This 207-nucleotide RNA was probed chemically with DMS and 2A3.
For DMS, 3,441 sequencing reads were counted.
Values cover nucleotides 27 to 156.
For 2A3, 1,299 sequencing reads were counted.
RNA sequence: GGGAACGACUCGAGUAGAGUCGAAAAUAAUAGGGGAACUCAAUAGAUGAUUUGAAACUACCUAGUGAAUGGAUAACUCAGAUCCUGUGUUGAGAAUUAUCCUUAGAAGGUCAAGGAGAAGGAGACCCAUUGGGAGGCUAUUGCAGUAAUUGAGUAAGGUCAUACCUAAUUUCGAUUAGGUAUGACCAAAAGAAACAACAACAACAAC
Reactivity to DMS in 0.01 (KOAc 150mM, MgCl2 10mM, bicine 150mM(pH8.5), 24C), signal-to-noise 2, nucleotides 027 to 156: u010a060a150u000a070g030g000g030g000a140a130c020u000c020a020a030u010a130g010a030u010g010a080u000u020u000g010a140a070a130c100u000a090c040c010u000a120g030u030g010a080a160u000g020g020a050u000a070a140c070u000c030a110g020a050u020c010c050u020g000u000g040u000u000g000a120g000a030a050u030u010a090u000c030c000u000u000a090g000a080a030g020g020u000c050a050a090g000g020a070g040a010a080g010g020a130g000a140c020c020c050a150u000u000g000g010g000a070g030g000c030u000a050u000u010g030c000a050g020u000a050a190u000u010g010a080g040u000a090a200
Reactivity to 2A3 in 0.01 (KOAc 150mM, MgCl2 10mM, bicine 150mM(pH8.5), 24C), signal-to-noise 3, nucleotides 027 to 156: u160a000a040u040a040g000g000g000g020a020a030c000u000c020a000a040u020a050g170a110u030g020a030u070u040u130g060a050a050a060c030u060a070c000c010u060a060g110u020g210a080a110u130g000g020a020u000a060a060c020u000c020a020g020a120u050c020c060u110g020u010g020u150u010g000a020g000a030a070u050u050a010u020c000c000u030u020a080g010a090a000g050g020u070c040a010a070g010g000a070g030a030a030g010g000a030g010a010c010c040c000a010u040u120g000g010g000a000g020g000c040u090a060u070u080g020c020a000g070u140a130a120u160u120g020a050g040u060a080a070

The data come from the RNA Mapping Database (RMDB), library OK3TST.